An RNA of 177 nucleotides, treated with 2A3 and DMS and read out base by base. The data come from the RNA Mapping Database (RMDB), library 15KREP. For 2A3, 1,507 sequencing reads were counted. The RNA was probed in 150 mM KOAc, 10 mM MgCl2 and 150 mM bicine (pH 8.5) at 24 C. For DMS, 2,861 sequencing reads were counted.

[RMDB]
RNA sequence: GGGAACGACUCGAGUAGAGUCGAAAAAUUUGUUUAGUACUAUUAAUGCUCUACCAGAAACUUCUGCCGAUAUUCUGGUGGUUGAUGAGGUUAGUAUGUGCACUAAUUAUGAUCUUUCAAUUAUUAACUAGAUUAAUGUGUUCGCACAUUAAUCUAGAAAAGAAACAACAACAACAAC
Reactivity to 2A3 in 0.01 (KOAc 150mM, MgCl2 10mM, bicine 150mM(pH8.5), 24C), signal-to-noise 3, nucleotides 027 to 126: a000u040u020u050g030u020u130u080a030g000u000a000c000u000a010u070u020a040a020u070g080c000u020c010u020a020c010c020a030g030a130a300a300c080u080u050c040u110g160c050c030g030a020u020a030u050u030c020u020g000g000u000g020g020u060u070g080a080u110g030a040g020g020u000u000a010g000u010a030u200g040u010g020c020a000c050u010a030a010u100u060a100u170g050a050u000c020u080u140u080c030a080a100u110u050a100u150u080a160a080
Reactivity to DMS in 0.01 (KOAc 150mM, MgCl2 10mM, bicine 150mM(pH8.5), 24C), signal-to-noise 3, nucleotides 027 to 126: a060u000u000u000g010u000u010u000a120g010u000a040c010u000a020u000u000a020a030u010g010c020u000c000u000a040c000c000a030g000a070a040a160c200u000u010c050u000g020c240c130g010a070u000a060u010u000c020u010g000g000u000g010g000u000u010g010a060u020g000a110g000g000u000u000a010g010u000a030u000g020u010g000c070a070c060u010a010a030u000u000a070u010g000a080u010c030u000u000u000c030a070a110u010u000a130u010u010a070a160